[RMDB]
RNA sequence: GGGAACGACUCGAGUAGAGUCGAAAACGGCAGUUGGAUCGACAUUUAGGCCACGGUAUCUGUGGGCGACGAAUAAGCGUCGUUGCAGAUACGCUAGCUCCCUAGGUAGUCUAGCGUGAUGCUAUGCUCUACUCAUCCGGUUCGCUGGAUGGGUAGAAAAAGAAACAACAACAACAAC
Reactivity to 2A3 in 0.01 (KOAc 150mM, MgCl2 10mM, bicine 150mM(pH8.5), 24C), signal-to-noise 7, nucleotides 027 to 126: c010g000g000c020a030g000u080u060g000g000a070u040c000g020a060c070a120u080u070u080a020g000g000c000c000a010c000g010g000u000a000u000c000u000g000u010g030g020g050c000g000a000c010g030a080a150u240a220a070g220c010g000u010c000g000u000u000g000c000a000g000a010u000a000c000g020c010u000a010g020c000u070c020c000c010u040a090g060g080u050a040g040u050c030u020a010g010c030g070u100g070a050u150g010c010u030a020u110g010c010
Reactivity to DMS in 0.01 (KOAc 150mM, MgCl2 10mM, bicine 150mM(pH8.5), 24C), signal-to-noise 3, nucleotides 027 to 126: c030g000g000c170a110g000u000u000g000g000a250u000c050g000a300c300a300u020u030u030a110g000g000c020c010a030c040g010g000u000a000u000c000u000g010u000g000g010g000c000g000a000c020g000a170a080u030a110a200g000c010g000u000c000g020u000u000g010c010a000g000a050u000a010c020g020c030u000a030g000c040u010c030c010c030u000a060g000g020u020a070g000u010c040u000a000g000c030g000u010g000a090u010g000c000u000a020u010g000c090